[RMDB]
An RNA of 177 nucleotides, treated with DMS and 2A3 and read out base by base. For DMS, 1,704 sequencing reads were counted. Values cover nucleotides 27 to 126. The RNA was probed in 150 mM KOAc, 10 mM MgCl2 and 150 mM bicine (pH 8.5) at 24 C.

RNA sequence: GGGAACGACUCGAGUAGAGUCGAAAACUUCUUCGUGAGGUAGGCAUCUCUGAUGCUAUCGUCAACAAUUUCUUCCUCUCUGGUGGCGAGAUUGGCCAGCAUCGCCCGUCAGUUGUGCCCCGUGGUACUCUUUGGUACUCUUCGGAGUACCAAAGAGAAAAGAAACAACAACAACAAC
Reactivity to DMS in 0.01 (KOAc 150mM, MgCl2 10mM, bicine 150mM(pH8.5), 24C), signal-to-noise 2, nucleotides 027 to 126: c120u010u000c070u000u000c170g000u020g010a060g010g020u000a070g020g020c020a020u020c000u020c150u000g020a030u000g010c050u000a050u000c040g020u010c030a040a060c110a070a100u000u000u000c080u010u000c030c000u000c030u000c050u000g000g040u000g010g010c080g000a050g010a130u020u000g010g040c020c020a070g010c070a070u000c120g000c030c020c070g010u010c070a040g000u000u000g020u000g000c030c000c010c050g020u000g010g000u000a140
Reactivity to 2A3 in 0.01 (KOAc 150mM, MgCl2 10mM, bicine 150mM(pH8.5), 24C), signal-to-noise 1, nucleotides 027 to 126: c010u030u020c000u140u140c050g080u070g080a010g000g000u030a020g140g130c000a010u000c200u070c180u300g000a020u010g030c030u030a080u010c030g020u010c030a030a020c040a040a160u000u140u050c030u000u050c050c030u030c000u000c080u050g040g000u080g050g000c000g020a050g030a110u050u030g070g000c000c000a030g040c060a040u040c050g020c000c000c000g010u030c000a030g030u140u110g070u080g030c010c000c010c020g030u040g040g000u030a060